[RMDB]
RNA sequence: GGGAACGACUCGAGUAGAGUCGAAAAUAAGCAUCACACCAACUUCUGAUGAAGUAAACAUUUCACCAAGUGAUUUAGCUUCUUCUGCACCACCGUUAGGGCGCUGACCUUUAAGCUCAAGCUCUUUUAGUUUUGAAUCUGCUUUUUCAAACAGCUCCCUAGUGUCACGUUUCGACGUGACACUAGGAAAAGAAACAACAACAACAAC
Reactivity to 2A3 in 0.01 (KOAc 150mM, MgCl2 10mM, bicine 150mM(pH8.5), 24C), signal-to-noise 2, nucleotides 027 to 156: u110a040a000g000c010a040u030c030a030c060a070c110c050a070a050c010u120u060c030u220g130a190u180g030a000a020g000u130a040a070a020c050a010u110u220u180c130a090c130c060a160a070g030u020g090a120u040u060u120a020g040c000u030u040c010u010u010c010u040g030c070a040c060c020a010c000c020g050u080u060a040g040g000g000c050g010c050u030g070a120c000c000u000u100u130a020a000g020c000u020c060a030a060g000c010u000c020u040u150u070u160a050g010u040u130u070u030g010a010a060u020c030u060g070c040u040u060u010u050u090c080a080a080a060c000a070g080c010u060c000
An RNA of 207 nucleotides, treated with 2A3 and read out base by base. The reactions ran in a buffer of 150 mM KOAc, 10 mM MgCl2 and 150 mM bicine (pH 8.5), at 24 C.